[RMDB]
RNA sequence: GGGAACGACUCGAGUAGAGUCGAAAAGGAGGGAACUGGCGCGGCCCCCGCUGGCGUCCCCUCUGCCUGGGCACACCCGGCCCGGCUUGGGGCCAGCACCCUGCCCUCGGGCCCUCCCAUAGCUGAGACUGGUGGCUGUGGCUGUGGCUCUGGGCCACAGUACUACUGCGUUCGCGCAGUAGUACUGAAAAGAAACAACAACAACAAC
Reactivity to 2A3 in 0.01 (KOAc 150mM, MgCl2 10mM, bicine 150mM(pH8.5), 24C), signal-to-noise 1, nucleotides 027 to 156: g040g010a020g010g040g020a090a060c110u100g080g040c060g020c030g110g010c020c010c010c010c010g000c040u040g050g010c030g090u170c040c010c000c000u000c040u010g010c000c010u040g010g000g000c030a030c020a060c150c050c060g060g000c000c000c020g050g000c020u020u050g010g000g050g020c040c000a000g010c010a100c000c000c010u050g010c000c020c020u000c020g010g010g020c000c000c000u020c030c000c000a030u000a000g020c010u020g010a020g050a210c070u100g130g070u130g070g030c000u000g000u000g040g010c030u040g060u280g050g000c000u010c010u020g010g010g010c000c000a060
Conditions: 150 mM KOAc, 10 mM MgCl2 and 150 mM bicine (pH 8.5), 24 C. Chemical mapping of a 207-nucleotide RNA with 2A3. As a SHAPE reagent, 2A3 marks flexible, mostly unpaired nucleotides at the ribose 2'-OH.